[RMDB]
This 207-nucleotide RNA was probed chemically with 2A3 and DMS. The RNA was probed in 150 mM KOAc, 10 mM MgCl2 and 150 mM bicine (pH 8.5) at 24 C. DMS adducts were read by reverse transcription with MarathonRT. The DMS profile rests on 2,822 reads.
RNA sequence: GGGAACGACUCGAGUAGAGUCGAAAAGCAUCCGACAUGGUGCUGGGAUGCGAAUAUCAGCACGUUACUCCUCGAGAAAGCAUGGGAGGAGGAUCAUCCAUGCAAUGGCUUUUGCCUAUCGUACCAUAGAGUCGUCGGUACGUAAGAUGACGACCGACAUCCACUACGGGUUCGCCCGUAGUGGAUGAAAAGAAACAACAACAACAAC
Reactivity to 2A3 in 0.01 (KOAc 150mM, MgCl2 10mM, bicine 150mM(pH8.5), 24C), signal-to-noise 4, nucleotides 027 to 156: g010c010a030u010c010c040g110a150c130a120u170g060g020u040g020c040u050g040g040g010a100u070g020c080g050a070a030u110a040u170c050a010g030c020a000c030g010u030u070a040c000u020c010c010u010c040g020a040g050a070a060a000g030c020a030u040g050g050g020a050g030g000a060g030g010a040u060c020a010u010c010c010a010u010g000c000a020a110u070g030g000c010u040u180u200u300g010c000c000u040a050u070c030g000u020a020c000c000a030u040a080g060a030g070u020c030g000u000c010g010g010u080a160c040g050u070a020a060g070a070u140g030a010c010g000a000c000c000g000a000
Reactivity to DMS in 0.01 (KOAc 150mM, MgCl2 10mM, bicine 150mM(pH8.5), 24C), signal-to-noise 1, nucleotides 027 to 156: g010c010a120u000c010c020g010a090c020a180u020g010g030u020g000c000u000g030g010g000a130u010g010c110g030a090a080u000a200u000c020a070g020c020a080c110g010u030u000a030c020u000c030c020u000c000g030a180g000a160a090a130g000c100a030u010g080g000g040a080g010g000a090g010g000a050u020c050a120u000c070c030a070u000g020c060a070a080u000g020g020c000u000u000u000u000g020c010c000u000a110u000c010g020u000a080c030c020a180u000a100g000a060g000u000c080g030u000c060g020g010u000a030c030g020u000a050a060g030a100u000g000a110c020g030a050c010c000g000a170